Record summary:
Structure probing data (DMS and 2A3) for a 177-nucleotide construct. Source: RMDB library M2PK90, as collected in RNAgym.

[RMDB]
RNA sequence: GGGAACGACUCGAGUAGAGUCGAAAAGCAAAGAAAUUUUAUCCCAAUAAGGCGAAGUAAGCAAGUCGACCCAACGCGAGGGCGCUAGCGAGCUUACGACCCCUAGCAGACUAAUAGCGAGAAAAAACACAGAUUAGAACUUCGGUUCUAAUCUGUGAAAAGAAACAACAACAACAAC
Reactivity to DMS in 0.01 (KOAc 150mM, MgCl2 10mM, bicine 150mM(pH8.5), 24C), signal-to-noise 2, nucleotides 027 to 126: g020c180a090a050a030g030a070a060a070u000u000u000u010a090u000c030c040c000a050a130u010a090a040g000g000c100g020a050a090g030u000a010a170g020c040a090a100g060u000c000g000a260c020c000c000a090a070c170g040c140g020a070g030g000g000c010g020c190u000a110g000c040g030a300g000c000u000u000a020c030g010a170c150c070c000c000u000a060g020c020a050g000a090c170u050a060a100u000a070g000c040g050a130g040a000a010a060a080a110a150
Reactivity to 2A3 in 0.01 (KOAc 150mM, MgCl2 10mM, bicine 150mM(pH8.5), 24C), signal-to-noise 1, nucleotides 027 to 126: g020c040a080a130a090g080a000a160a040u100u110u080u090a090u080c020c020c020a000a060u210a120a010g030g000c030g030a000a000g070u000a010a000g010c010a000a000g040u080c030g210a300c040c000c010a090a110c090g010c060g140a120g000g000g000c010g000c000u010a010g080c010g030a000g000c000u000u000a050c000g030a050c000c000c000c000u010a060g010c040a000g000a100c060u020a040a090u060a170g020c050g010a030g110a130a100a010a000a030a000
For DMS, 693 sequencing reads were counted.